Source: RMDB library M2PK90, as collected in RNAgym. Structure probing data (DMS and 2A3) for a 177-nucleotide construct. 2A3 is a SHAPE reagent: it acylates the 2'-hydroxyl of flexible nucleotides of all four kinds.
RNA sequence: GGGAACGACUCGAGUAGAGUCGAAAAUAAAAUAAUGCACAUAAUCCAGUCGCUGACGCUAAAAAUGACGCUGCGUCGCGACGGAUGUGGCAACGCGCACUCACGCCGAAGUGAAAUCGGUAAAAAACAUCAGAGUUAUGUUCGCAUAACUCUGAUGAAAAGAAACAACAACAACAAC
Reactivity to DMS in 0.01 (KOAc 150mM, MgCl2 10mM, bicine 150mM(pH8.5), 24C), signal-to-noise 3, nucleotides 027 to 126: u000a110a050a100a120u020a090a090u000g000c010a110c010a040u000a220a050u000c000c000a150g020u000c020g020c000u000g060a010c010g000c000u000a020a060a110a100a150u000g020a140c250g000c180u000g020c000g030u000c000g000c000g000a000c010g000g000a000u010g040u010g000g000c050a020a070c160g000c110g010c070a060c050u010c050a080c140g020c000c000g000a000a060g020u010g010a060a130a090u000c010g020g010u000a000a040a070a080a040a080
Reactivity to 2A3 in 0.01 (KOAc 150mM, MgCl2 10mM, bicine 150mM(pH8.5), 24C), signal-to-noise 4, nucleotides 027 to 126: u100a010a030a020a020u240a060a100u100g060c050a040c010a280u180a230a090u160c010c030a050g010u010c010g030c060u140g000a000c000g000c040u100a020a040a160a080a080u210g070a040c110g030c190u060g020c000g000u000c000g000c000g000a000c000g000g000a000u000g000u000g000g000c030a030a050c050g020c010g020c040a040c030u030c020a030c070g040c000c020g020a020a010g030u050g170a140a050a060u020c020g000g050u110a080a130a030a000a000a000
Reactivities are given for positions 27 through 126. The DMS profile rests on 2,492 reads. Conditions: 150 mM KOAc, 10 mM MgCl2 and 150 mM bicine (pH 8.5), 24 C.